[RMDB]
RNA sequence: GGGAACGACUCGAGUAGAGUCGAAAAGCUUGGUUGAUUCGGAUACCUAUUCGAAGCCACCGGGGCCUUGUUGGCACCGCAGCAAACAGGACGCGUCGUCGCGACAACGGCAGGCUGGGCAACCGGCAUUCCUAUAUACGUUCGCGUAUAUAGGAAUAAAAGAAACAACAACAACAAC
Reactivity to DMS in 0.01 (KOAc 150mM, MgCl2 10mM, bicine 150mM(pH8.5), 24C), signal-to-noise 9, nucleotides 027 to 126: g010c030u010u010g020g010u010u010g000a180u010u000c010g010g000a030u010a100c200c140u030a070u000u000c020g010a040a060g010c040c050a090c090c010g010g000g000g000c010c020u000u010g010u010u010g010g010c040a060c060c040g010c100a070g020c060a060a080a090c110a080g000g010a070c060g010c090g020u010c050g010u010c060g000c040g000a050c070a070a070c080g000g000c050a080g010g010c020u000g000g000g000c100a060a080c010c000g010g010c060
Reactivity to 2A3 in 0.01 (KOAc 150mM, MgCl2 10mM, bicine 150mM(pH8.5), 24C), signal-to-noise 9, nucleotides 027 to 126: g050c040u150u170g010g020u050u070g050a140u040u020c010g000g020a030u200a300c030c060u130a100u040u030c020g020a020a010g040c020c010a020c010c010g010g000g050g010c000c010u060u120g060u050u080g080g000c040a020c030c030g000c010a030g010c010a040a100a070c040a070g050g060a040c020g020c010g050u120c020g020u040c040g020c010g040a030c020a030a010c020g020g000c030a030g070g000c010u030g000g030g000c010a030a040c010c000g000g000c010